[RMDB]
RNA sequence: GGGAACGACUCGAGUAGAGUCGAAAACUUUUACACCAACCCUAAUAAAUGUUUUUGAACUUUCUUGGAAACUAGCACUUCCUAAGAAUGAUUGUGCAAACAAGGCUGUCUUGGUUAAUCCAGUUACACGUUAUUCUGAUUUCGAUCAGAAUAACGUAAAAGAAACAACAACAACAAC
Reactivity to 2A3 in 0.01 (KOAc 150mM, MgCl2 10mM, bicine 150mM(pH8.5), 24C), signal-to-noise 3, nucleotides 027 to 126: c000u050u150u160u240a060c080a020c000c020a030a060c020c000c030u060a070a070u060a130a220a090u090g030u000u070u040u050u140g040a040a030c010u000u030u060c000u040u030g000g010a020a040a040c020u010a060g050c030a050c050u020u020c010c020u020a070a030g010a070a030u060g080a140u030u110g050u050g060c000a000a050a050c000a030a030g040g000c040u020g030u080c020u030u020g010g000u030u090a050a010u070c020c020a050g010u060u070a070c080
Reactivity to DMS in 0.01 (KOAc 150mM, MgCl2 10mM, bicine 150mM(pH8.5), 24C), signal-to-noise 4, nucleotides 027 to 126: c030u000u010u000u000a090c090a100c090c050a070a090c050c020c020u010a090a140u010a080a070a060u010g000u000u000u000u010u000g000a050a090c030u000u000u000c000u010u000g020g000a040a030a010c050u010a120g010c160a150c300u000u000c020c010u000a010a040g000a050a030u000g000a090u000u010g000u000g010c160a040a070a060c030a050a050g010g010c090u000g010u000c070u000u000g000g010u000u000a070a210u010c040c040a090g000u000u010a060c170